[RMDB]
RNA sequence: GGGAACGACUCGAGUAGAGUCGAAAAAGUCUUGUUCAGUGAUGAAGUCAUGGAAUAAGCGCUGGGCACAGCGCCCGAGCCUGAUGAGGAGAUAUUCCUUGCUGCCUUCCUUCUGAGAACAGCGUAGCCCACACUACUAGUUCGCUAGUAGUGUGGGAAAAGAAACAACAACAACAAC
Reactivity to 2A3 in 0.01 (KOAc 150mM, MgCl2 10mM, bicine 150mM(pH8.5), 24C), signal-to-noise 3, nucleotides 027 to 126: a000g010u000c010u030u020g030u050u030c030a050g040u030g160a130u030g090a060a030g020u040c030a060u160g020g080a100a050u090a090a050g010c020g000c020u000g000g040g030c120a070c030a190g060c020g000c060c000c010g030a020g000c000c060u120g040a110u090g040a040g110g020a030g040a030u080a050u080u040c000c000u000u050g020c040u030g010c000c020u010u020c020c040u070u090c050u070g160a140g010a110a020c010a010g000c020g040u060a020g020
Reactivity to DMS in 0.01 (KOAc 150mM, MgCl2 10mM, bicine 150mM(pH8.5), 24C), signal-to-noise 3, nucleotides 027 to 126: a070g000u010c010u010u000g000u020u020c020a080g010u020g010a100u000g020a090a140g010u000c010a030u020g040g000a020a050u000a150a120g010c040g030c030u020g020g010g010c300a090c060a020g010c040g030c020c020c070g010a130g000c030c020u000g000a070u000g010a080g000g000a050g010a040u010a080u010u000c010c020u000u010g010c040u000g000c070c070u010u010c040c050u000u010c140u020g000a120g010a050a090c050a020g020c060g000u000a100g000

This 177-nucleotide RNA was probed chemically with 2A3 and DMS. The RNA was probed in 150 mM KOAc, 10 mM MgCl2 and 150 mM bicine (pH 8.5) at 24 C. In probing experiments dimethyl sulfate is read out at A N1 and C N3, which are open when not base-paired. For DMS the reverse transcriptase was MarathonRT. Values cover nucleotides 27 to 126.